This 207-nucleotide RNA was probed chemically with 2A3 and DMS. Values cover nucleotides 27 to 156. The RNA was probed in 150 mM KOAc, 10 mM MgCl2 and 150 mM bicine (pH 8.5) at 24 C.

RNA sequence: GGGAACGACUCGAGUAGAGUCGAAAAGCAUGCAGAGUGAGUUUGAAUGUGUCAUGUAUGAUGCUGAGUUACUGAUGUGACUCUGAGCACAUGUGACUCUGUGGGCUCACCCCAUAGGACUUGGUAUUCUCUGCUGGGUUCACACUAUCUCUAAUUACGAUUACCAUUUAUUCGUAAAUGGUAAUCGAAAAGAAACAACAACAACAAC
Reactivity to 2A3 in 0.01 (KOAc 150mM, MgCl2 10mM, bicine 150mM(pH8.5), 24C), signal-to-noise 9, nucleotides 027 to 156: g050c040a030u160g020c050a020g040a040g050u040g010a030g010u030u080u130g200a230a110u180g040u020g000u030c010a000u030g100u130a060u080g210a170u030g020c010u010g000a000g000u010u010a010c040u190g260a230u300g020u000g000a010c000u000c040u100g190a030g000c000a000c000a010u010g000u000g010a010c000u000c020u060g050u130g030g010g000c020u020c020a040c010c010c000c010a030u090a080g050g000a020c010u020u030g030g030u090a080u140u050c060u010c020u050g000c010u030g020g010g030u060u080c040a040c010a030c110u120a160u120c060u010c060u150a100a150u220u270a060
Reactivity to DMS in 0.01 (KOAc 150mM, MgCl2 10mM, bicine 150mM(pH8.5), 24C), signal-to-noise 3, nucleotides 027 to 156: g030c060a090u000g030c060a050g010a040g010u020g000a060g020u000u000u030g010a100a060u000g010u000g030u010c020a050u010g040u010a040u000g010a060u000g000c040u000g000a030g010u000u000a020c000u000g010a190u010g040u000g010a020c010u000c020u000g000a090g020c010a090c010a020u000g020u000g010a040c010u000c020u000g030u000g010g010g000c010u000c060a040c020c000c000c040a130u000a090g020g010a050c030u010u000g020g010u000a100u000u000c070u000c050u000g000c020u000g000g010g010u000u000c020a070c070a110c300u000a090u000c030u000c020u000a070a120u000u000a300
DMS (dimethyl sulfate) methylates the pairing face of unpaired adenines and cytosines.